[RMDB]
RNA sequence: GGGAACGACUCGAGUAGAGUCGAAAAAGAACAUUUUUGUCAAGAAUAUACAAUUAUUGGCACACAGAUACACAGUAAGAUGUGAGCAGAGCUGGCUCUGAGACUGCUGGGCACAGAGUGGGGAGAUUCACUAUUGUCUGGACUGAAUAGGCAGUGGCAGUGUAAUGGGAUUCGUCCCAUUACACUGAAAAGAAACAACAACAACAAC
Reactivity to 2A3 in 0.01 (KOAc 150mM, MgCl2 10mM, bicine 150mM(pH8.5), 24C), signal-to-noise 3, nucleotides 027 to 156: a000g130a090a020c050a060u140u100u040u080u130g030u010c030a030a030g050a120a060u140a010u050a150c080a130a040u190u100a070u080u090g030g020c020a000c000a010c010a010g040a090u150a070c050a010c020a080g040u090a090a010g080a090u040g020u030g070a010g020c020a010g000a000g080c060u040g060g000c010u000c030u050g080a060g020a040c010u010g040c010u050g040g030g030c020a020c010a070g060a020g050u060g000g010g040g010a030g020a020u080u060c010a010c060u040a060u060u030g010u020c010u010g010g070a070c020u020g000a100a010u060a080g030g000c010a020g010u010g050g010
Reactivity to DMS in 0.01 (KOAc 150mM, MgCl2 10mM, bicine 150mM(pH8.5), 24C), signal-to-noise 2, nucleotides 027 to 156: a060g040a090a120c040a100u000u000u010u020u000g000u020c000a060a070g010a090a030u010a130u000a110c100a060a130u000u000a060u000u010g000g050c030a020c180a130c070a100g030a130u020a120c060a070c050a060g000u010a080a100g020a130u000g030u000g010a080g020c030a030g000a090g020c050u000g030g010c020u000c020u010g020a090g010a060c060u000g030c030u000g050g010g030c030a080c110a050g020a090g000u010g020g020g030g010a130g010a160u000u000c060a030c060u000a080u010u000g010u000c020u010g000g010a120c120u000g030a060a070u000a030g000g010c020a060g000u000g010g000

An RNA of 207 nucleotides, treated with 2A3 and DMS and read out base by base.
For 2A3 the reverse transcriptase was SuperScript II with manganese.
Reactivities are given for positions 27 through 156.
High 2A3 reactivity points to a flexible backbone, as in loops and unpaired stretches.
It was measured as part of the RMDB library OK3TST.